[RMDB]
RNA sequence: GGGAACGACUCGAGUAGAGUCGAAAAAUUUCAAUGACUGCAGAUAUCAUUUCAACAAUUGGUGAUUUUGUAAAAUGGAUUUUAGAUACAGUAAAAAAAUUCACUAAAUAAUAGUAGAAAUUCAUUGCAUAUGAUGAGCCUUCGGGCUCAUCAUAUGAAAAGAAACAACAACAACAAC
Reactivity to 2A3 in 0.01 (KOAc 150mM, MgCl2 10mM, bicine 150mM(pH8.5), 24C), signal-to-noise 1, nucleotides 027 to 126: a000u100u120u170c000a000a000u000g010a000c000u030g000c000a000g030a160u160a000u000c000a000u000u220u060c120a260a120c010a100a110u060u090g000g020u080g040a030u000u260u000u000g010u000a000a140a000a000u030g000g010a010u000u000u000u150a010g100a080u270a050c070a080g170u200a190a060a060a000a000a000a060u030u050c030a000c030u030a010a000a070u160a070a020u010a010g050u150a000g010a020a190a050u020u100c000a010u000u290g000

This 177-nucleotide RNA was probed chemically with 2A3. The RNA was probed in 150 mM KOAc, 10 mM MgCl2 and 150 mM bicine (pH 8.5) at 24 C.